An RNA of 207 nucleotides, treated with 2A3 and read out base by base. The RNA was probed in 150 mM KOAc, 10 mM MgCl2 and 150 mM bicine (pH 8.5) at 24 C. For 2A3 the reverse transcriptase was SuperScript II with manganese. It was measured as part of the RMDB library OK3TST.
[RMDB]
RNA sequence: GGGAACGACUCGAGUAGAGUCGAAAAAAUCGGUGCCAAACAUGAACGGCAUAUUUUUCUGUUUGAUGGCUUAAUGAUCAGUUGUAAACCUAAUCAUGGCCAGACUCGGCUUCCAGGUUACAGUAGUGCAGAAUACAGGUUAAAAGAAAAAUUUGUCCGAAACUGUCAGAUUCGUCUGACAGUUUCGAAAAGAAACAACAACAACAAC
Reactivity to 2A3 in 0.01 (KOAc 150mM, MgCl2 10mM, bicine 150mM(pH8.5), 24C), signal-to-noise 1, nucleotides 027 to 156: a010a010u190c070g030g000u020g000c000c000a030a160a060c040a130u160g120a090a030c040g020g020c030a010u020a090u070u050u030u000u030c040u020g110u080u060u080g080a030u030g000g000c030u100u090a060a020u100g050a010u010c050a030g070u110u090g170u290a180a110a070c000c000u030a050a000u090c000a030u010g010g000c030c000a000g030a080c100u040c070g010g000c020u100u020c060c060a020g050g050u090u060a070c010a030g090u140a000g010u040g060c030a000g040a100a040u080a060c010a000g020g030u050u070a040a130a060a070g050a070a040a050a000a040u020u140u080g100u050c040